This 177-nucleotide RNA was probed chemically with DMS and 2A3. The RNA was probed in 150 mM KOAc, 10 mM MgCl2 and 150 mM bicine (pH 8.5) at 24 C.

RNA sequence: GGGAACGACUCGAGUAGAGUCGAAAACAUUUUAACGCGUGUGCACUCUCUAACACGAAUUACCCAGUUAUUUUCGACUUUAGUCGAGUCGUUAUAGCGUGCGUUGAGAGAGUUGGCCGCGAUUGAACACACGUAAUAAGUUCGCUUAUUACGUGUGAAAAGAAACAACAACAACAAC
Reactivity to DMS in 0.01 (KOAc 150mM, MgCl2 10mM, bicine 150mM(pH8.5), 24C), signal-to-noise 9, nucleotides 027 to 126: c270a080u010u000u010u000a030a070c200g010c010g010u000g020u010g000c080a090c020u000c020u000c010u000a080a050c020a020c030g000a070a070u000u000a120c070c050c050a130g010u010u000a080u000u000u000u000c000g000a020c000u000u000u000a040g010u000c020g010a010g010u000c000g010u000u000a030u000a070g020c020g020u000g010c050g020u000u000g000a060g000a040g000a050g020u000u000g010g010c010c020g010c020g010a100u000u000g010a080a160
Reactivity to 2A3 in 0.01 (KOAc 150mM, MgCl2 10mM, bicine 150mM(pH8.5), 24C), signal-to-noise 5, nucleotides 027 to 126: c030a070u120u140u100u170a100a060c050g010c010g020u080g010u070g070c020a010c030u020c000u000c010u050a070a010c010a000c060g050a060a080u130u070a070c030c030c040a020g050u060u070a100u080u040u010u020c010g010a000c000u040u010u040a080g100u160c020g000a000g000u010c000g000u000u010a030u020a020g000c010g030u080g010c030g050u080u110g010a020g000a000g000a010g050u070u130g050g010c010c000g000c000g040a060u030u120g050a070a010